Source information:
Structure probing data (2A3) for a 207-nucleotide construct. The data come from the RNA Mapping Database (RMDB), library OK3TST. Reactivities are rounded to 0.1 and cut off at 0 and 3. The reactions ran in a buffer of 150 mM KOAc, 10 mM MgCl2 and 150 mM bicine (pH 8.5), at 24 C. The 2A3 profile rests on 921 reads.

[RMDB]
RNA sequence: GGGAACGACUCGAGUAGAGUCGAAAAAUGUACUUCUGGGGAGAACAAUCGUCUGUCUUCACUAUAUCUGGAGUUCCUUCUGUGACUGAAUGGGCAUUUGGAGAACUUUGAGUGCUGAUGAUAGUUCACUCACAGUUCAUGGCUGAUUCUGCACAAAGGCAGUGAUCAAAUUCGUUUGAUCACUGCCAAAAGAAACAACAACAACAAC
Reactivity to 2A3 in 0.01 (KOAc 150mM, MgCl2 10mM, bicine 150mM(pH8.5), 24C), signal-to-noise 2, nucleotides 027 to 156: a000u080g020u030a030c040u040u040c030u050g020g010g060g000a050g000a110a030c030a140a270u190c110g040u090c070u060g000u000c010u030u060c030a040c100u140a070u080a120u300c080u040g030g000a000g020u030u010c010c000u080u070c070u070g070u050g100a210c000u020g030a010a020u030g000g000g000c080a100u040u020u260g170g030a280g010a030a000c000u030u000u010g000a000g010u050g030c060u030g020a150u040g080a070u130a130g030u100u200c010a000c010u000c000a020c020a000g000u000u020c040a030u060g000g000c000u040g060a050u000u010c020u050g000c020a000c000a030a040a030